[RMDB]
RNA sequence: GGGAACGACUCGAGUAGAGUCGAAAAGAUAUGGAGGGAGAACUACUCAUUAUCUUGCUAUGAAGUCGGAAACGAUGGAGCAAGAGAAUGAGCUCCCUCCUAAGUCAAACAGGUCUUCGGACCUGAACAGUUCAAACACGUUCGCGUGUUUGAACUGAAAAGAAACAACAACAACAAC
Reactivity to DMS in 0.01 (KOAc 150mM, MgCl2 10mM, bicine 150mM(pH8.5), 24C), signal-to-noise 1, nucleotides 027 to 126: g020a040u000a300u020g000g000a000g020g000g010a030g000a130a030c090u070a300c030u000c000a000u000u000a050u000c000u000u000g030c000u000a270u030g000a090a280g090u000c000g000g000a140a070a150c030g020a010u000g020g030a000g040c000a000a000g000a010g000a040a000u000g000a000g000c000u010c020c000c000u010c000c000u020a010a030g000u010c030a050a080a270c000a000g010g020u000c000u000u000c200g030g000a000c010c000u000g000a030a140